[RMDB]
RNA sequence: GGGAACGACUCGAGUAGAGUCGAAAACGACACGCACCGCAAGCUCCCGCCGCACAUCGGCCGUGGCCGUAGCCCCGAUGUACUGGAAGAUCCUGUGGAGUGAGGUAGGGGUGUACCCGGAGAAGAAACUACUCAGUCCGUUCGCGGACUGAGUAGUAAAAGAAACAACAACAACAAC
Reactivity to DMS in 0.01 (KOAc 150mM, MgCl2 10mM, bicine 150mM(pH8.5), 24C), signal-to-noise 2, nucleotides 027 to 126: c150g010a100c090a110c080g000c060a080c040c020g000c060a140a270g000c030u000c020c000c020g020c030c010g000c050a000c060a050u000c020g000g020c300c080g000u010g020g040c020c170g000u000a070g030c060c020c020c030g010a100u000g000u000a050c030u010g040g010a060a160g000a070u020c120c080u010g000u020g010g020a080g010u000g000a020g000g010u000a100g020g000g000g050u010g000u000a030c080c060c010g000g010a090g040a070a130g000a040a100
Reactivity to 2A3 in 0.01 (KOAc 150mM, MgCl2 10mM, bicine 150mM(pH8.5), 24C), signal-to-noise 1, nucleotides 027 to 126: c030g080a020c020a000c110g090c010a020c030c020g130c070a020a030g000c000u000c000c010c020g070c000c000g000c000a020c000a010u000c000g010g060c050c070g180u140g090g060c040c050g070u080a110g020c060c000c000c000g000a000u030g050u050a030c050u100g000g050a060a040g110a140u200c050c030u090g090u210g040g000a010g000u080g010a020g070g080u060a030g020g050g080g010u020g000u020a050c010c020c020g070g070a100g010a030a000g000a000a170
Conditions: 150 mM KOAc, 10 mM MgCl2 and 150 mM bicine (pH 8.5), 24 C. Chemical mapping of a 177-nucleotide RNA with DMS and 2A3. It was measured as part of the RMDB library OK2TST. DMS adducts were read by reverse transcription with MarathonRT.